An RNA of 177 nucleotides, treated with DMS and 2A3 and read out base by base. DMS adducts were read by reverse transcription with MarathonRT. Source: RMDB library M2PK50, as collected in RNAgym. The DMS profile rests on 1,682 reads.
RNA sequence: GGGAACGACUCGAGUAGAGUCGAAAACCAACGUGGUUCGCCACGUUGGAAACAACAAAUACUGUCAGUUGAGACAGACACAAAAACUGUCAGAGUAGACAGAAAGGCGGUCCUUCGGGACCGCCAAGUGUCAGUAAAUGUUCGCAUUUACUGACACAAAAGAAACAACAACAACAAC
Reactivity to DMS in 0.01 (KOAc 150mM, MgCl2 10mM, bicine 150mM(pH8.5), 24C), signal-to-noise 2, nucleotides 027 to 126: c000c000a010a000c000g010u000g010g020u010u000c270g030c000c000a000c010g000u000u010g000g000a040a130a050c070a070a050c070a050a080a130u000a160c050u010g000u000c000a100g010u000u000g000a170g000a000c010a010g010a050c160a040c200a050a060a070a090a070c000u000g000u000c000a220g000a160g000u010a050g000a030c000a010g020a070a100a070g010g020c010g020g000u000c000c000u000u010c180g020g000g000a000c000c010g000c010c010a000a020
Reactivity to 2A3 in 0.01 (KOAc 150mM, MgCl2 10mM, bicine 150mM(pH8.5), 24C), signal-to-noise 3, nucleotides 027 to 126: c000c000a000a010c010g010u010g040g050u050u080c220g060c060c000a000c010g000u000u010g000g010a040a090a000c040a020a010c010a020a120a020u220a200c000u010g010u010c020a150g020u110u120g100a070g020a110c010a000g060a030c040a000c030a180a160a010a090a080c000u010g000u000c000a000g030a060g300u100a050g030a010c010a000g040a070a010a010g000g000c010g000g000u000c000c000u050u110c200g050g000g000a000c000c010g010c000c010a000a000